[RMDB]
RNA sequence: GGGAACGACUCGAGUAGAGUCGAAAAGCAAAAUAAGCGAGCAAUGGAUUAAGCCGCAAUACAUAAUAAAAUAAGAGCGGCAAGAUGGAAAGCUCGCAAGGCGAACCAAUCCACAAAAGAGUAUUUCGGUAUUCUAAAAGAAACAACAACAACAAC
Reactivity to 2A3 in 0.01 (KOAc 150mM, MgCl2 10mM, bicine 150mM(pH8.5), 24C), signal-to-noise 1, nucleotides 027 to 135: g020c010a010a030a050a200u170a230a010g000c000g020a000g000c030a040a210u100g020g010a010u160u080a040a030g010c010c010g020c000a030a040u210a050c040a000u300a150a030u180a090a300a060a010u170a080a020g110a000g090c000g000g000c000a010a010g040a010u100g000g170a170a050a010g050c010u050c050g000c000a000a000g010g050c010g000a000a010c010c010a030a070u090c040c020a070c040a040a100a010a000g040a010g010u020a040u030u080u080c090g040g010u000a010u000u020c010u060a060